Structure probing data (2A3 and DMS) for a 177-nucleotide construct. Values cover nucleotides 27 to 126. The DMS profile rests on 16,920 reads.
[RMDB]
RNA sequence: GGGAACGACUCGAGUAGAGUCGAAAAGAUAUGGAGCUAGUGGGAGUACUAAUCUGGGAUCGGAAACGAUCCCAGAUGUACGCGAAACCACAGGCUCCUAAGUCAAAGUGGAUGUUCGCAUCCACAAUCCGUUAUAUAAGUUCGCUUAUAUAACGGAAAAAGAAACAACAACAACAAC
Reactivity to 2A3 in 0.01 (KOAc 150mM, MgCl2 10mM, bicine 150mM(pH8.5), 24C), signal-to-noise 6, nucleotides 027 to 126: g030a000u080a040u150g000g000a010g010c010u160a090g050u010g010g050g010a170g030u020a030c050u150a090a140u000c000u010g010g000g000a010u010c000g020g020a060a040a040c010g020a000u000c030c000c000a000g000a000u000g000u000a000c000g020c050g140a160a030a010c000c000a010c030a020g060g000c000u000c010c000u020a110a020g040u010c070a190a030a070g000u010g010g010a000u020g030u100u160c300g010c130a000u000c010c000a010c000a000a050
Reactivity to DMS in 0.01 (KOAc 150mM, MgCl2 10mM, bicine 150mM(pH8.5), 24C), signal-to-noise 5, nucleotides 027 to 126: g010a060u010a300u010g000g010a020g010c010u000a130g040u010g010g000g010a190g010u000a030c050u010a100a100u000c010u000g000g000g000a010u000c010g010g010a110a070a220c000g010a000u000c010c000c000a000g000a000u000g000u000a020c030g020c240g010a140a140a210c000c000a010c000a300g010g010c000u000c000c000u000a010a080g010u000c040a080a140a170g030u000g000g000a020u000g010u000u020c280g020c010a020u000c000c000a010c000a080a120
The RNA was probed in 150 mM KOAc, 10 mM MgCl2 and 150 mM bicine (pH 8.5) at 24 C.